Structure probing data (DMS and 2A3) for a 170-nucleotide construct. It was measured as part of the RMDB library 15KLIB.
RNA sequence: GGGAACGACUCGAGUAGAGUCGAAAACCUUUCCUCGUCUUCAUCGGUCAGCCUUCUGAGUUCCUCUUCUUCCUCCUUGCUGAGGAUCUUUCCUCCCGCGGAGAGCUGCUUCUUCUUGUUCUCGAGGUUACUUGUCUGUUCGCAGACAAGAAAAGAAACAACAACAACAAC
Reactivity to DMS in 0.01 (KOAc 150mM, MgCl2 10mM, bicine 150mM(pH8.5), 24C), signal-to-noise 9, nucleotides 027 to 129: c060c030u020u010u020c030c000u030c030g010u000c040u000u000c010a040u000c030g000g020u020c030a080g030c050c020u030u040c060u030g020a150g040u000u020c030c020u020c060u020u010c000u000u000c030c000u000c000c030u030u030g030c090u020g040a100g000g030a070u040c060u000u010u010c000c000u010c030c050c020g000c110g020g020a070g000a070g030c070u020g020c010u000u000c000u030u010c040u020u030g010u030u020c020u020c040g010a080g000g020u000u000a100
Reactivity to 2A3 in 0.01 (KOAc 150mM, MgCl2 10mM, bicine 150mM(pH8.5), 24C), signal-to-noise 9, nucleotides 027 to 129: c000c000u010u030u030c010c010u030c010g060u010c050u080u030c020a080u050c020g010g020u030c030a030g020c010c000u110u090c040u090g080a070g070u050u030c000c000u020c000u070u010c010u070u050c020c010u010c000c000u060u120g020c080u060g050a040g020g020a050u020c020u040u080u030c010c010u020c010c010c010g050c050g010g010a060g010a020g030c030u040g010c000u040u020c000u050u020c000u020u070g050u090u010c020u000c020g030a040g040g010u030u040a080
The 2A3 profile rests on 116,780 reads.
For DMS the reverse transcriptase was MarathonRT.